[RMDB]
RNA sequence: GGGAACGACUCGAGUAGAGUCGAAAAGAAUAUAAGAGCGCAGUAAAUGUGAGAGCAAACUGCGCCCGGACUGUAGGAUCCGGUGGCACAGCAACGCUCAGUCACAAAACGCUGUGCCACUUGAAGACGGAUUAUUAUUAUUCGUAAUAAUAAUCCGAAAAGAAACAACAACAACAAC
Reactivity to DMS in 0.01 (KOAc 150mM, MgCl2 10mM, bicine 150mM(pH8.5), 24C), signal-to-noise 8, nucleotides 027 to 126: g000a140a090u040a080u030a090a070g000a110g000c010g000c000a010g010u010a080a080a070u000g010u010g000a210g010a170g000c010a030a100a030c000u000g000c000g000c000c000c000g000g000a060c120u010g010u020a070g000g000a170u000c020c030g000g000u000g000g000c000a000c000a010g010c000a110a100c180g020c080u040c100a130g020u030c170a110c250a080a050a070a090c170g000c000u000g010u000g000c000c000a000c000u000u010g020a080a100g000a210
Reactivity to 2A3 in 0.01 (KOAc 150mM, MgCl2 10mM, bicine 150mM(pH8.5), 24C), signal-to-noise 9, nucleotides 027 to 126: g030a060a030u210a010u050a130a030g030a010g000c000g000c010a000g010u050a030a110a080u040g030u040g070a100g000a010g050c010a100a270a000c000u000g000c000g000c000c000c000g010g010a010c040u150g100u230a070g070g080a080u000c010c010g000g000u010g000g000c000a000c000a000g000c020a070a080c060g030c040u090c080a080g120u200c050a040c030a110a120a040a010c090g000c000u000g000u000g000c000c000a010c000u030u080g050a040a010g070a020